[RMDB]
RNA sequence: GGGAACGACUCGAGUAGAGUCGAAAAAGGGAAGAAAAUAAUUUAGAAAGGAGAUUCCGCCCCAGCUUGCGGUGCGGGCGAAAGGCUGUAAGGCAUCCCGGAGAGGGGAGGCAAGGCGAAAGCCAAAAACGGUACACCAUCUUCGGAUGGUGUACAAGAGAUGAUACGACUUCGGUCGUAUCAUCUCAAAAGAAACAACAACAACAAC
Reactivity to 2A3 in 0.01 (KOAc 150mM, MgCl2 10mM, bicine 150mM(pH8.5), 24C), signal-to-noise 1, nucleotides 027 to 156: a010g100g020g000a050a010g080a070a160a040a110u280a100a040u190u210u160a170g000a030a070a020g050g040a060g010a060u170u000c020c020g060c010c010c010c010a020g020c020u070u160g040c070g000g070u070g050c050g000g000g000c040g030a060a000a020g070g000c020u040g060u170a080a000g040g000c010a020u040c040c010c010g000g000a040g030a000g000g000g000g000a020g000g000c040a050a020g000g000c030g040a040a000a030g000c000c000a040a170a000a000a000c060g020g000u000a000c000a000c000c010a000u000c000u040u000c090g020g020a010u000g010g000u000g000u010a000c000a000a000